[RMDB]
RNA sequence: GGGAACGACUCGAGUAGAGUCGAAAACGAUGACUGGUUCAAUAGUAAAUGUAGUAAGGUCUGUCUGACAAAGUCUGCCCUAUUAAGUCUUCUACCUACUAACAUGUUAUCGCAGAUUCCAGGUGUAAUAUCCUGCCUGAUUCGUCAGGCAGGAUAUAAAAGAAACAACAACAACAAC
Reactivity to 2A3 in 0.01 (KOAc 150mM, MgCl2 10mM, bicine 150mM(pH8.5), 24C), signal-to-noise 5, nucleotides 027 to 126: c030g010a020u030g050a010c020u050g060g060u130u160c080a060a120u070a100g060u070a050a100a100u170g010u010a030g030u030a070a090g030g020u030c030u030g070u010c020u050g040a060c080a050a130a000g020u010c020u020g060c000c020c020u090a110u120u170a110a050g030u020c000u050u000c010u040a060c000c000u020a040c020u010a040a020c020a050u070g030u040u040a020u030c040g000c080a020g000a090u050u000c020c020a030g050g050u080g030u040a030
Reactivity to DMS in 0.01 (KOAc 150mM, MgCl2 10mM, bicine 150mM(pH8.5), 24C), signal-to-noise 4, nucleotides 027 to 126: c050g000a060u000g000a020c000u000g030g020u020u030c150a110a120u030a070g020u000a050a070a100u050g020u010a030g010u040a030a080g020g010u020c020u000g000u000c050u000g010a070c100a070a100a040g010u000c030u000g000c040c050c030u020a090u030u030a050a090g010u020c030u000u000c060u000a070c030c070u000a040c060u010a060a040c050a040u030g000u000u010a050u000c040g000c050a080g000a120u010u000c030c000a030g010g000u020g020u020a090
An RNA of 177 nucleotides, treated with 2A3 and DMS and read out base by base. The reactions ran in a buffer of 150 mM KOAc, 10 mM MgCl2 and 150 mM bicine (pH 8.5), at 24 C.